[RMDB]
RNA sequence: GGGAACGACUCGAGUAGAGUCGAAAAGAAGCGUCGCGGCAGUCGCGUGACGCAACAUCCACGGUCAGCGGUAGUACCUCGGUCGGCGGGGAGUUGCGUCGGGAGACUAGGCGCGCUUUGCCGUGGGCCCCGUAUGAACGUUCGCGUUCGUACGGGGAAAAGAAACAACAACAACAAC
Reactivity to DMS in 0.01 (KOAc 150mM, MgCl2 10mM, bicine 150mM(pH8.5), 24C), signal-to-noise 6, nucleotides 027 to 126: g010a050a060g000c000g000u050c010g030c010g030g020c110a050g020u000c030g000c100g010u010g010a000c010g000c000a000a040c050a100u010c000c000a030c030g000g000u020c100a120g050c160g010g020u000a090g000u040a300c030c000u010c020g000g010u000c010g020g000c050g000g000g000g010a090g010u000u000g020c030g010u000c000g000g010g000a090g000a020c000u000a170g010g000c020g000c010g000c010u000u000u000g000c010c010g000u020g000g010g000
Reactivity to 2A3 in 0.01 (KOAc 150mM, MgCl2 10mM, bicine 150mM(pH8.5), 24C), signal-to-noise 7, nucleotides 027 to 126: g050a040a000g020c020g070u170c060g090c020g130g080c140a040g050u070c020g020c100g150u040g000a000c000g000c000a000a000c010a050u000c000c000a010c010g000g020u020c010a030g010c020g010g010u030a020g030u090a050c000c000u020c010g010g020u010c000g010g040c070g020g030g010g010a150g030u020u010g010c010g000u000c000g000g050g000a140g000a000c000u030a050g060g000c000g000c000g000c010u020u000u050g020c000c000g030u080g020g020g000

An RNA of 177 nucleotides, treated with DMS and 2A3 and read out base by base. The data come from the RNA Mapping Database (RMDB), library OK1LIB. For DMS, 16,025 sequencing reads were counted. For 2A3 the reverse transcriptase was SuperScript II with manganese. The reactions ran in a buffer of 150 mM KOAc, 10 mM MgCl2 and 150 mM bicine (pH 8.5), at 24 C. In probing experiments dimethyl sulfate is read out at A N1 and C N3, which are open when not base-paired. For 2A3, 15,643 sequencing reads were counted.